[RMDB]
RNA sequence: GGGAACGACUCGAGUAGAGUCGAAAAUCGUUGCGGCUGGUGGCUGGCGUCCAAAACAUGCCUUUUGUCACAUGGAUGUCGUGUUGGUUGAGCAUGUACCGGUAUGUGUGCAGCUGCAUACUGUCGGGUAGUAGUGGAUGUUCGCAUCCACUACUACAAAAGAAACAACAACAACAAC
Reactivity to 2A3 in 0.01 (KOAc 150mM, MgCl2 10mM, bicine 150mM(pH8.5), 24C), signal-to-noise 2, nucleotides 027 to 126: u080c020g050u020u070g040c040g030g000c020u060g060g030u020g050g000c020u010g040g000c010g040u080c030c010a060a000a060a060c010a010u060g070c020c020u090u160u150u180g070u040c020a030c000a050u040g090g040a100u120g090u230c030g000u040g010u070u070g070g030u030u110g020a010g000c040a020u050g010u100a080c000c000g000g000u070a100u250g000u040g000u020g030c000a100g100c090u190g000c020a000u010a000c020u030g040u070c030g000g040
Reactivity to DMS in 0.01 (KOAc 150mM, MgCl2 10mM, bicine 150mM(pH8.5), 24C), signal-to-noise 4, nucleotides 027 to 126: u000c060g010u000u000g010c050g010g010c060u000g020g030u010g020g010c050u010g000g000c050g000u000c040c040a060a070a100a080c260a040u000g020c040c040u010u000u000u020g030u010c070a080c060a180u000g020g010a070u000g030u000c030g010u000g010u000u000g010g010u000u000g020a100g000c040a050u000g020u010a280c050c020g000g000u000a020u020g030u000g010u000g010c020a200g020c250u000g010c020a020u000a040c030u000g010u000c030g000g000
Source: RMDB library OK2TST, as collected in RNAgym. Structure probing data (2A3 and DMS) for a 177-nucleotide construct. For 2A3, 2,231 sequencing reads were counted. The reactions ran in a buffer of 150 mM KOAc, 10 mM MgCl2 and 150 mM bicine (pH 8.5), at 24 C. DMS adducts were read by reverse transcription with MarathonRT.